The record gives the reactivity of an RNA of 177 nucleotides to 2A3. The data come from the RNA Mapping Database (RMDB), library RFM100.

RNA sequence: GGGAACGACUCGAGUAGAGUCGAAAAACUCAUAAAUUACAUAUUGGGUAUAAAAUACAAUGUAUGUUAGAAGUUGUUUCAGAAGGCUAUGGUUUUCUGAUUUUUUUAUGCUCAGUAGUGAUAUGCAUGUGAAAUGCUGUUUCGACAGCAUUUCACAAAAAGAAACAACAACAACAAC
Reactivity to 2A3 in 0.01 (KOAc 150mM, MgCl2 10mM, bicine 150mM(pH8.5), 24C), signal-to-noise 1, nucleotides 027 to 126: a000c020u020c000a100u250a030a150a020u120u070a000c010a070u060a020u020u000g070g010g000u000a000u000a000a000a000a020u020a000c000a000a000u040g020u130a150u040g160u120u300a000g010a130a000g010u000u020g010u000u100u000c000a000g000a000a000g000g000c010u080a230u300g180g020u000u030u030u100c000u000g000a020u040u000u000u000u060u000u000a000u000g000c000u000c000a000g090u000a000g030u050g000a070u010a060u110g080c040a010
2A3 adducts were read by reverse transcription with SuperScript II with manganese.